[RMDB]
The record gives the reactivity of an RNA of 177 nucleotides to DMS and 2A3. For DMS, 4,635 sequencing reads were counted. Values cover nucleotides 27 to 126. For DMS the reverse transcriptase was MarathonRT. For 2A3, 3,264 sequencing reads were counted.
RNA sequence: GGGAACGACUCGAGUAGAGUCGAAAAGUAUUGCGCAAAUCAGCAUGAUUUUUUUUUUCUCAUUAUCGAAUUCGUGCUAAAAAUUUUCUAAACGCUAAAUUAUCGGUUUGUAAAUGCAUAAAUGAGACAUUUAAUACCGGUUCGCCGGUAUUAAAUGAAAAGAAACAACAACAACAAC
Reactivity to DMS in 0.01 (KOAc 150mM, MgCl2 10mM, bicine 150mM(pH8.5), 24C), signal-to-noise 1, nucleotides 027 to 126: g010u010a070u010u010g020c050g020c050a110a080a070u030c090a050g000c000a010u000g010a000u000u000u000u000u000u050u000u000u000u090c000u010c000a010u000u000a030u000c150g000a020a010u000u010c010g010u010g020c000u000a070a050a050a050a070u010u020u010u000c040u040a070a050a070c060g010c090u030a030a070a040u010u000a060u030c100g000g000u000u000u010g010u000a030a050a030u000g000c080a050u010a020a010a000u000g000a010g000a040
Reactivity to 2A3 in 0.01 (KOAc 150mM, MgCl2 10mM, bicine 150mM(pH8.5), 24C), signal-to-noise 5, nucleotides 027 to 126: g080u090a050u120u240g040c060g020c060a070a070a070u110c020a080g000c010a000u010g010a020u000u010u000u000u020u000u000u000u010u000c010u000c000a020u000u040a030u020c020g010a010a010u050u020c010g010u010g000c000u090a060a010a010a110a130u080u130u060u060c120u120a090a040a030c060g030c030u050a040a060a100u130u160a150u210c090g030g020u010u080u030g060u100a070a160a090u090g050c040a030u010a090a050a010u020g010a000g000a010